[RMDB]
RNA sequence: GGGAACGACUCGAGUAGAGUCGAAAAGAAAGAAAAUAAUAAGAGGUAGAGAGAGCUUCUCAGUCAAAAAGCCGGAAGAGUGCAAAUAAUAACAGGAUGUGCUACGGCGAUUUCCUGUUAGAGAAAAGGGUAAAUGUAUCUUCGGAUACAUUUACCCAAAAGAAACAACAACAACAAC
Reactivity to 2A3 in 0.01 (KOAc 150mM, MgCl2 10mM, bicine 150mM(pH8.5), 24C), signal-to-noise 1, nucleotides 027 to 126: g010a010a040a020g080a010a180a000a000u300a000a080u120a110a030g030a000g000g030u070a020g010a010g000a000g000a000g110c000u010u000c020u000c000a020g050u040c000a000a080a120a040a000g010c030c000g040g000a000a000g090a000g050u080g000c080a010a000a090u130a080a000u000a000a030c000a000g030g010a010u010g030u070g070c030u060a060c250g090g000c000g020a020u050u050u020c000c000u020g000u020u050a030g030a000g060a000a120a020a020
Reactivity to DMS in 0.01 (KOAc 150mM, MgCl2 10mM, bicine 150mM(pH8.5), 24C), signal-to-noise 1, nucleotides 027 to 126: g000a070a140a060g030a160a020a060a060u000a010a100u020a080a100g000a040g040g000u020a030g000a060g010a130g020a080g000c070u010u020c060u040c000a040g020u060c060a040a000a030a110a130g010c150c070g020g000a040a050g010a060g000u010g050c100a030a080a070u000a050a100u000a010a000c000a030g000g000a010u010g040u030g000c010u000a080c190g040g000c000g010a080u020u000u000c000c000u000g010u010u010a040g000a170g010a010a060a110a160
Description:
Structure probing data (2A3 and DMS) for a 177-nucleotide construct. The reactions ran in a buffer of 150 mM KOAc, 10 mM MgCl2 and 150 mM bicine (pH 8.5), at 24 C. 2A3 adducts were read by reverse transcription with SuperScript II with manganese. Values cover nucleotides 27 to 126. Source: RMDB library OK1LIB, as collected in RNAgym. For DMS the reverse transcriptase was MarathonRT.